[RMDB]
RNA sequence: GGGAACGACUCGAGUAGAGUCGAAAAAUGCGGCCGCGAACCUCGAGCGAAAUAAGCGCCGGCUGCGCGACAUGCUCGACGAGGCGAUGACGGCGCGCGCCAAUCUGCAAAUCGCCGUGCAUCGAAUCCAACAGAACGAACACGCCAUCCUCGGGAGCCUAUUGUACGUGUUCGCACGUACAAUAGGAAAAGAAACAACAACAACAAC
Reactivity to 2A3 in 0.01 (KOAc 150mM, MgCl2 10mM, bicine 150mM(pH8.5), 24C), signal-to-noise 2, nucleotides 027 to 156: a000u080g000c010g030g000c020c010g040c070g020a060a060c060c030u050c160g100a080g020c070g050a190a080a070u240a190a030g000c040g020c070c050g000g000c030u030g000c030g000c000g010a010c030a030u080g020c000u000c010g000a000c010g030a070g030g030c010g000a020u000g010a000c010g020g040c020g000c000g030c010g000c020c010a120a230u180c100u180g050c020a060a060a170u100c010g000c070c000g060u110g090c010a010u020c010g040a060a060u110c030c010a090a030c000a070g050a040a040c030g050a050a010c050a010c030g000c070c000a050u050c010c010u070c020g020g000g060a050g050